Chemical mapping of a 177-nucleotide RNA with 2A3 and DMS. The DMS profile rests on 30,958 reads.
RNA sequence: GGGAACGACUCGAGUAGAGUCGAAAACGGUUACUUUUCCAGUGUGAACUGGUCGACGUCGGUGUAACCCUGGCGGAACAGCUUCGCGCAGCCGGUCAGGUACUUCAUGUAGCGGUCGUAGACAGUCACCUGGAUAGAAAUUCGUUUCUAUCCAGGUAAAAGAAACAACAACAACAAC
Reactivity to 2A3 in 0.01 (KOAc 150mM, MgCl2 10mM, bicine 150mM(pH8.5), 24C), signal-to-noise 9, nucleotides 027 to 126: c030g030g030u110u080a100c030u070u090u070u030c030c020a070g010u040g030u030g180a080a060c010u050g050g060u050c030g020a050c020g050u070c040g080g030u060g020u070a060a080c020c000c000u010g020g000c010g020g020a100a210c060a080g030c020u100u140c160g020c040g000c040a010g020c010c010g030g070u060c010a010g000g020u030a050c040u060u090c020a080u170g060u100a030g100c030g020g030u060c010g010u020a050g020a100c010a030g030u040c010
Reactivity to DMS in 0.01 (KOAc 150mM, MgCl2 10mM, bicine 150mM(pH8.5), 24C), signal-to-noise 7, nucleotides 027 to 126: c100g000g010u000u000a030c040u010u010u000u000c010c010a070g000u010g000u030g000a080a050c020u010g000g010u010c040g000a050c020g000u000c030g000g020u000g000u020a080a080c150c020c010u000g000g010c000g000g000a050a100c140a130g000c030u000u030c110g000c100g020c030a120g000c040c010g010g020u010c020a020g000g010u010a080c090u000u010c080a060u020g010u010a100g010c040g010g010u010c020g020u000a090g000a050c050a080g000u010c080
Description: Values cover nucleotides 27 to 126. DMS adducts were read by reverse transcription with MarathonRT.